[RMDB]
RNA sequence: GGGAACGACUCGAGUAGAGUCGAAAAGAUAUGGAUUGAACUACAGAGCUUCUUGCUCGAGGAUCUCGGAAACGAGGGAGAGCAACUAGCUCUGCAAUCCUAAGUCAAACACGUGUUCGCACGUGAACGUUGAACGCUAGUUCGCUAGCGUUCAACGAAAAGAAACAACAACAACAAC
Reactivity to DMS in 0.01 (KOAc 150mM, MgCl2 10mM, bicine 150mM(pH8.5), 24C), signal-to-noise 2, nucleotides 027 to 126: g020a050u000a300u010g000g020a010u000u000g020a050a030c070u000a300c010a020g010a010g020c010u000u000c060u000u000g000c000u010c000g010a040g000g000a010u000c000u000c000g000g000a130a090a230c030g000a020g010g000g010a020g000a020g020c000a000a020c040u000a010g030c010u000c000u000g000c000a000a010u000c010c000u000a070a130g010u030c050a070a110a190c030a030c000g030u000g010u010u000c150g030c000a010c000g020u020g030a030a050
Reactivity to 2A3 in 0.01 (KOAc 150mM, MgCl2 10mM, bicine 150mM(pH8.5), 24C), signal-to-noise 1, nucleotides 027 to 126: g060a020u120a050u120g000g040a020u010u040g020a120a060c080u140a050c300a000g000a000g000c000u010u010c010u000u040g010c010u010c000g000a090g000g000a010u060c010u020c000g040g000a090a070a020c000g000a010g000g030g020a020g000a000g000c000a020a000c000u010a000g000c000u020c000u010g010c000a000a000u000c020c000u030a140a040g080u050c060a000a240a000c000a000c030g010u000g070u070u120c290g010c090a030c010g030u000g040a070a020
This 177-nucleotide RNA was probed chemically with DMS and 2A3. For DMS, 1,380 sequencing reads were counted. It was measured as part of the RMDB library TTRDEL.